[RMDB]
RNA sequence: GGGAACGACUCGAGUAGAGUCGAAAACUGCAGGCGAGUAUCGGACGCGUCAGCUCCAGAGUAUCGGGGGUUGGAUAUCCCUCGUGAAUAUUGCAGGCAUCGACUGCAAAGACUAAACACUCCUCAAGAACUGUUAUAACUUCGGUUAUAACAGUUCAAAAGAAACAACAACAACAAC
Reactivity to 2A3 in 0.01 (KOAc 150mM, MgCl2 10mM, bicine 150mM(pH8.5), 24C), signal-to-noise 4, nucleotides 027 to 126: c020u040g020c010a030g050g000c020g050a010g030u080a090u220c060g040g040a010c050g000c010g050u050c040a030g000c010u000c030c010a040g020a030g110u080a070u140c010g010g000g010g000g000u040u060g100g030a060u080a050u200c010c000c000u000c010g010u020g030a050a040u150a080u110u070g000c030a010g030g010c010a100u140c080g100a060c010u010g000c020a030a050a000g050a020c030u090a020a110a000c020a030c060u030c020c010u070c030a080a040
Reactivity to DMS in 0.01 (KOAc 150mM, MgCl2 10mM, bicine 150mM(pH8.5), 24C), signal-to-noise 5, nucleotides 027 to 126: c060u000g030c050a060g010g000c010g010a060g010u000a100u010c100g020g000a070c080g030c060g000u010c130a070g020c040u000c030c040a110g010a110g020u000a080u010c010g000g000g010g000g010u000u000g000g010a160u000a130u010c000c000c000u000c020g020u010g010a080a080u010a080u000u000g000c010a030g010g010c080a150u000c130g000a040c000u000g000c020a030a050a100g000a130c170u010a050a080a090c140a080c070u000c020c020u000c140a090a180